Chemical mapping of a 177-nucleotide RNA with 2A3 and DMS.
[RMDB]
RNA sequence: GGGAACGACUCGAGUAGAGUCGAAAACGCGGUGACGGCGAUCAGGAUGGCAGCCCACCACGGCACACCUGGGAUGUGGGGGUGAAUCGAGCGGUGACUUGCCUGUACCGCCGACCUCGCCCGCUGCUCGACCGUGGUAAUUCGUUACCACGGUCGAAAAAGAAACAACAACAACAAC
Reactivity to 2A3 in 0.01 (KOAc 150mM, MgCl2 10mM, bicine 150mM(pH8.5), 24C), signal-to-noise 2, nucleotides 027 to 126: c040g020c020g100g000u110g070a110c060g000g040c000g000a050u020c030a020g140g000a110u130g090g060c040a020g020c050c050c010a050c020c020a010c020g040g040c040a000c000a020c060c040u120g030g010g090a140u190g070u120g060g010g000g000g000u030g060a030a050u070c030g010a030g100c070g000g080u050g040a070c030u050u120g080c000c000u020g030u050a050c010c000g010c000c000g000a020c000c000u030c020g080c010c020c000g070c080u120g010c020
Reactivity to DMS in 0.01 (KOAc 150mM, MgCl2 10mM, bicine 150mM(pH8.5), 24C), signal-to-noise 2, nucleotides 027 to 126: c020g020c110g000g000u000g010a050c080g020g030c030g000a070u020c050a060g000g010a120u010g000g010c130a090g000c060c030c030a060c010c030a040c010g000g000c120a110c070a020c020c020u000g000g010g010a070u020g000u010g000g010g000g000g030u000g010a100a170u000c030g010a170g000c060g000g030u010g010a120c020u010u010g010c080c010u010g000u010a000c020c000g010c010c010g000a080c090c060u000c040g000c010c020c030g010c050u020g000c150
The DMS profile rests on 1,700 reads. 2A3 adducts were read by reverse transcription with SuperScript II with manganese.